[RMDB]
An RNA of 177 nucleotides, treated with 2A3 and DMS and read out base by base. For 2A3, 767 sequencing reads were counted. Reactivities are given for positions 27 through 126. The reactions ran in a buffer of 150 mM KOAc, 10 mM MgCl2 and 150 mM bicine (pH 8.5), at 24 C.
RNA sequence: GGGAACGACUCGAGUAGAGUCGAAAAGGAUGCAGCAGACUGAUUAAUCCAGACAUCCCGCUACAAGCGUACGCUGGUCAGGCCUGGUCCGGUAAAGGUGCUCUGAAUACCAGAGAUAUUUCUGGCGUAUGAACACGGUGUUCGCACCGUGUUCAUAAAAAGAAACAACAACAACAAC
Reactivity to 2A3 in 0.01 (KOAc 150mM, MgCl2 10mM, bicine 150mM(pH8.5), 24C), signal-to-noise 2, nucleotides 027 to 126: g050g030a010u030g240c020a070g010c030a010g090a070c030u080g100a170u150u180a010a040u090c010c000a000g010a000c060a040u050c010c040c010g000c050u070a060c060a190a000g030c000g020u020a040c080g010c010u000g000g100u050c030a020g000g070c000c030u050g030g000u040c020c000g040g000u110a080a080a050g030g020u080g040c050u000c000u010g130a140a060u070a130c050c000a000g000a050g040a080u070a140u240u140u020c000u050g020g000c000g070
Reactivity to DMS in 0.01 (KOAc 150mM, MgCl2 10mM, bicine 150mM(pH8.5), 24C), signal-to-noise 2, nucleotides 027 to 126: g000g000a040u000g000c020a070g020c110a070g000a080c020u020g000a160u000u040a160a030u040c030c030a040g020a140c210a140u040c010c070c000g000c080u000a080c160a060a140g010c020g010u020a060c070g060c000u010g000g030u000c050a050g000g040c020c060u010g020g000u000c010c050g000g000u000a050a090a090g020g010u000g030c010u000c010u000g000a050a090u000a130c080c000a020g000a020g000a140u020a060u010u010u000c000u000g020g010c170g050